[RMDB]
RNA sequence: GGGAACGACUCGAGUAGAGUCGAAAAGAUAUGGACUGUCCAUCUGGUCCGAAGAACUCGGAAACGAGGGAGGACGGAUGGAGCAGUCCUAAGUCAAAACGUCUCAUGUGUUCGCACAUGAGACGAACCUCCAUAUGGUGUUCGCACCAUAUGGAGGAAAAGAAACAACAACAACAAC
Reactivity to 2A3 in 0.01 (KOAc 150mM, MgCl2 10mM, bicine 150mM(pH8.5), 24C), signal-to-noise 3, nucleotides 027 to 126: g030a020u060a030u100g000g000a000c010u000g030u020c020c010a000u000c030u300g300g090u030c010c040g060a100a020g020a030a010c010u020c010g020g030a090a070a040c000g010a000g010g020g000a030g000g000a000c020g000g010a010u010g010g010a010g020c000a000g010u010c000c000u000a010a000g040u000c030a010a010a070a170c010g010u000c000u000c000a000u020g030u000g050u070u060c260g070c170a010c000a000u000g010a000g000a010c000g000a000a010
Reactivity to DMS in 0.01 (KOAc 150mM, MgCl2 10mM, bicine 150mM(pH8.5), 24C), signal-to-noise 2, nucleotides 027 to 126: g000a050u000a300u000g010g000a010c000u000g000u000c000c000a000u000c000u000g050g030u000c000c020g010a090a230g000a170a140c000u000c000g010g000a130a120a250c000g010a020g010g020g020a050g010g000a040c000g000g000a030u000g000g000a010g020c000a010g000u000c000c000u010a000a070g010u000c040a050a060a090a210c010g000u000c000u000c010a000u000g020u000g000u000u000c220g020c000a010c000a000u000g010a000g000a000c000g000a010a040